[RMDB]
RNA sequence: GGGAACGACUCGAGUAGAGUCGAAAAGAUAUGGACCUCGUGCCAGCAACAGCUCGGAAACGAGACAUGCUGUGCACAGGUCCUAAGUCAAAACUCCGAUGUAAUUGUUCGCAAUUACAUCGGAGAACGUUUGUAUUUAGUUCGCUAAAUACAAACGAAAAGAAACAACAACAACAAC
Reactivity to 2A3 in 0.01 (KOAc 150mM, MgCl2 10mM, bicine 150mM(pH8.5), 24C), signal-to-noise 7, nucleotides 027 to 126: g020a020u070a050u100g010g000a000c000c010u060c220g000u010g000c010c010a000g000c010a030a100c040a220g030c000u000c000g020g040a090a090a060c010g010a000g030a010c020a050u070g000c000u030g140u270g010c000a000c000a000g010g000u000c000c000u000a010a010g010u000c020a020a020a060a130c000u000c000c010g000a000u000g000u000a000a010u010u010g040u090u100c300g010c160a000a000u010u000a000c000a000u000c000g000g000a000g000a000a000
Reactivity to DMS in 0.01 (KOAc 150mM, MgCl2 10mM, bicine 150mM(pH8.5), 24C), signal-to-noise 8, nucleotides 027 to 126: g000a040u000a300u010g000g000a010c000c000u000c210g040u000g000c010c010a010g010c000a030a070c250a170g000c000u000c000g000g000a120a080a240c010g010a010g000a040c070a180u000g000c000u000g000u010g010c000a010c000a010g000g010u000c000c000u000a000a060g010u000c030a070a060a120a140c000u000c000c000g010a010u000g010u000a000a000u000u000g010u010u020c190g010c010a000a010u000u000a010c000a000u000c000g000g000a000g000a010a040
Structure probing data (2A3 and DMS) for a 177-nucleotide construct.
For DMS, 13,199 sequencing reads were counted.
2A3 is a SHAPE reagent: it acylates the 2'-hydroxyl of flexible nucleotides of all four kinds.
The data come from the RNA Mapping Database (RMDB), library TTRDEL.